This 177-nucleotide RNA was probed chemically with DMS.
RNA sequence: GGGAACGACUCGAGUAGAGUCGAAAAGAUAUGGAGAUCACAUACGUGUUCCGUUCCAACAGCUUGUUCAGCUCGGAAACGAGCUGAGACAAGACAUGGAAUGACACGUAUGUGAUCUCCUAAGUCAGCCUUUUAGAUAGUUCGCUAUCUAAAAGGCAAAAGAAACAACAACAACAAC
Reactivity to DMS in 0.01 (KOAc 150mM, MgCl2 10mM, bicine 150mM(pH8.5), 24C), signal-to-noise 4, nucleotides 027 to 126: g010a040u000a300u000g010g000a000g000a010u000c010a000c000a000u000a000c000g020u000g000u000u020c210c080g020u000u000c000c000a060a090c300a270g010c010u020u000g010u000u000c000a010g000c000u000c000g020g000a110a090a250c020g020a010g010c010u000g010a030g020a020c000a010a000g000a030c130a300u010g000g010a020a010u010g010a030c000a010c010g000u000a000u000g010u000g000a000u000c000u010c000c000u000a000a050g000u000c060a170

Notes: DMS adducts were read by reverse transcription with MarathonRT. Values cover nucleotides 27 to 126.